The record gives the reactivity of an RNA of 177 nucleotides to DMS and 2A3. Conditions: 150 mM KOAc, 10 mM MgCl2 and 150 mM bicine (pH 8.5), 24 C. For DMS the reverse transcriptase was MarathonRT. For DMS, 967 sequencing reads were counted.
RNA sequence: GGGAACGACUCGAGUAGAGUCGAAAACAGCUUGUGCUUCAGCAUGUGAAGCUCAAUGUCCAGUGGUCUCUUGCGAGGAUGCUUGCCAAACAGUUUGUAAGGGACAAUGUGUAUUCUCGGGACAAAAACUCACUGACCGUUUCGACGGUCAGUGAGUAAAAGAAACAACAACAACAAC
Reactivity to DMS in 0.01 (KOAc 150mM, MgCl2 10mM, bicine 150mM(pH8.5), 24C), signal-to-noise 1, nucleotides 027 to 126: c140a100g020c110u000u000g000u000g000c010u000u000c000a020g030c300a130u060g000u010g030a030a000g010c020u000c000a010a030u000g010u010c020c020a220g020u000g000g000u000c000u000c030u000u020g000c020g010a050g000g000a190u000g000c040u000u040g000c150c160a000a100a080c030a060g000u000u030u000g040u010a040a090g000g010g010a030c000a050a040u010g000u000g000u000a090u000u000c000u000c030g010g000g040a040c040a060a030a050a060
Reactivity to 2A3 in 0.01 (KOAc 150mM, MgCl2 10mM, bicine 150mM(pH8.5), 24C), signal-to-noise 1, nucleotides 027 to 126: c000a000g020c020u020u040g000u020g040c000u000u000c010a140g080c090a290u210g100u010g190a010a020g070c020u030c000a000a060u100g020u050c010c030a020g030u030g070g060u010c000u000c000u060u040g060c020g000a040g050g050a040u050g050c040u150u180g050c040c040a040a140a100c020a090g050u050u050u040g010u010a030a020g040g000g010a040c070a020a070u060g040u000g010u030a090u080u000c000u010c000g000g000g000a000c000a020a050a000a000